[RMDB]
RNA sequence: GGGAACGACUCGAGUAGAGUCGAAAAAGGGUCGGAGGGGCGACCUCCCUGCCCCCUGCUCCAAGCUCCCCACCCCCACCUGGAACCUGCCGGCAGGAAGCCUGGCCCUGGAGGGUGGUCACGGCCCAAGAGGAUAGUUAUUCGUAACUAUCCUCUUAAAAGAAACAACAACAACAAC
Reactivity to 2A3 in 0.01 (KOAc 150mM, MgCl2 10mM, bicine 150mM(pH8.5), 24C), signal-to-noise 2, nucleotides 027 to 126: a000g030g000g020u030c020g050g060a150g050g000g000g000c000g020a060c000c050u030c010c010c000u000g010c000c010c010c000c010u000g000c010u030c040c030a090a050g000c030u060c000c010c010c010a020c000c000c000c000c000a030c010c020u020g000g040a030a080c000c040u050g020c020c030g060g000c010a030g090g100a080a000g010c010c030u050g020g000c040c000c010u020g030g010a070g030g010g000u010g000g020u040c020a010c070g030g000c010c000c000
Reactivity to DMS in 0.01 (KOAc 150mM, MgCl2 10mM, bicine 150mM(pH8.5), 24C), signal-to-noise 9, nucleotides 027 to 126: a090g000g010g020u000c040g020g010a120g020g010g010g020c040g010a090c100c050u000c020c020c030u010g010c020c000c010c010c040u000g010c040u000c050c040a100a160g010c060u000c120c060c010c070a190c030c010c010c010c040a140c060c040u000g000g010a080a120c080c090u000g010c030c050g000g010c020a100g010g010a110a120g010c010c010u000g020g010c070c060c040u000g000g000a100g000g000g010u000g010g010u000c050a070c070g010g000c000c030c030
Structure probing data (2A3 and DMS) for a 177-nucleotide construct. Reactivities are given for positions 27 through 126. Conditions: 150 mM KOAc, 10 mM MgCl2 and 150 mM bicine (pH 8.5), 24 C. DMS (dimethyl sulfate) methylates the pairing face of unpaired adenines and cytosines. The data come from the RNA Mapping Database (RMDB), library OK2TRN. 2A3 adducts were read by reverse transcription with SuperScript II with manganese.